[RMDB]
RNA sequence: GGGAACGACUCGAGUAGAGUCGAAAAUAGUUAUUCGUAACUACUCAAACCUUUGUGCGUGUAUGAUUGUGGGAGGAUCCAAUUCCCAUUGGGAAUUGAAGAUCCAUCGAUCACAAUCUAAGCACGCACUCUGGUCUCUCAACGGUUUCGACCGUAAAUAUUAGCACGUCUUCGGACGUGCUAAUAUAAAAGAAACAACAACAACAAC
Reactivity to DMS in 0.01 (KOAc 150mM, MgCl2 10mM, bicine 150mM(pH8.5), 24C), signal-to-noise 1, nucleotides 027 to 156: u000a050g020u000u000a040u000u000c140g000u010a100a150c020u010a070c060u010c020a190a110a020c000c020u000u020u000g010u000g020c000g050u000g040u000a300u000g010a030u000u020g000u010g050g000g010a080g050g000a010u000c000c000a000a070u000u000c000c010c000a300u010u000g090g060g000a050a010u000u000g010a050a160g020a010u000c000c020a030u000c160g000a100u000c000a010c010a000a000u000c020u010a050a240g010c030a000c020g040c000a000c000u000c040u000g000g000u010c010u010c030u010c040a120a150c010g020g020u000u000u020c170g000a140c020c020g010u000a060a120
Reactivity to 2A3 in 0.01 (KOAc 150mM, MgCl2 10mM, bicine 150mM(pH8.5), 24C), signal-to-noise 3, nucleotides 027 to 156: u120a030g040u040u030a060u110u130c200g020u060a030a050c000u030a020c050u040c170a150a090a060c010c010u010u010u030g000u000g000c010g000u000g030u000a070u200g000a000u010u000g010u000g010g020g000a040g000g000a000u000c020c010a000a010u000u000c000c010c080a070u130u300g000g000g000a020a010u020u010g050a260a060g010a010u000c010c000a020u180c010g010a030u050c000a000c000a010a000u000c000u010a110a020g010c000a000c000g000c000a000c010u000c000u000g010g020u010c010u000c010u020c060a070a030c010g000g070u060u170u160c230g080a060c020c000g050u080a040a220